[RMDB]
RNA sequence: GGGAACGACUCGAGUAGAGUCGAAAAACAUUGGCCUUCGGGCCAAUGUACUGGAAAUAAAGCCGAAAGGCUACGCAUUCCUUAUUUGGCGAUAGCCUGCGAGAUUAUGUAAGUUCGCUUACAUAAACGUGUUAACUGCUUUCGAGCAGUUAACACGAAAAGAAACAACAACAACAAC
Reactivity to 2A3 in 0.01 (KOAc 150mM, MgCl2 10mM, bicine 150mM(pH8.5), 24C), signal-to-noise 1, nucleotides 027 to 126: a080c000a000u010u000g010g030c000c000u060u030c280g020g000g000c000c000a000a000u000g000u000a010c030u010g000g130a040a070a090u280a170a190a030g050c040c000g090a190a050a000g020g000c000u020a010c040g000c000a040u090u150c030c000u110u170a200u080u110u150g100g000c050g040a100u030a020g000c020c010u000g000c040g040a190g010a080u080u000a000u080g010u000a000a020g000u010u110c140g000c050u000u000a000c000a000u040a000a050a030
Reactivity to DMS in 0.01 (KOAc 150mM, MgCl2 10mM, bicine 150mM(pH8.5), 24C), signal-to-noise 1, nucleotides 027 to 126: a010c010a000u000u000g010g020c010c000u000u000c230g000g030g020c000c010a000a000u010g000u000a090c090u000g010g010a070a080a090u000a050a090a130g000c020c010g010a140a120a050g010g000c010u000a000c100g020c050a180u000u000c040c030u020u040a100u000u000u000g000g000c020g010a100u010a000g010c000c000u010g000c140g000a080g000a170u000u000a020u000g000u000a030a000g020u000u030c180g010c010u000u000a000c000a000u000a000a020a120